Chemical mapping of a 207-nucleotide RNA with 2A3. The reactions ran in a buffer of 150 mM KOAc, 10 mM MgCl2 and 150 mM bicine (pH 8.5), at 24 C. As a SHAPE reagent, 2A3 marks flexible, mostly unpaired nucleotides at the ribose 2'-OH.
RNA sequence: GGGAACGACUCGAGUAGAGUCGAAAACAUUUAAAGGAAGGUGACCUGAUAUCACCCAAUAUUAGGUAACAGCAAAAGGGUGCGGCUCAGAAAAUGCACCUAACCGCAUGUAGAAAGCAAUGAGGGACUGGGGAAAACCCUUUCGUUGCUGUAAAAACCUGGGUAUUUAGUUCGCUAAAUACCCAGGAAAAGAAACAACAACAACAAC
Reactivity to 2A3 in 0.01 (KOAc 150mM, MgCl2 10mM, bicine 150mM(pH8.5), 24C), signal-to-noise 2, nucleotides 027 to 156: c040a040u140u270u300a170a100a050g080g030a090a050g090g000u060g040a010c000c000u000g020a020u000a010u000c040a060c020c000c000a000a010u000a020u020u010a020g020g020u050a160a050c010a040g050c030a020a040a050a050g010g000g000u000g000c040g050g000c020u050c150a030g210a040a140a020a010u190g010c000a020c000c000u000a050a000c040c040g010c070a020u050g020u090a070g090a090a060a020g020c010a000a040u050g010a060g020g090g010a060c140u150g000g000g040g050a010a010a050a070c000c020c000u020u040u080c070g000u000u000g000c040u020g020u040a120a140a000a000a010
Values cover nucleotides 27 to 156.
2A3 adducts were read by reverse transcription with SuperScript II with manganese.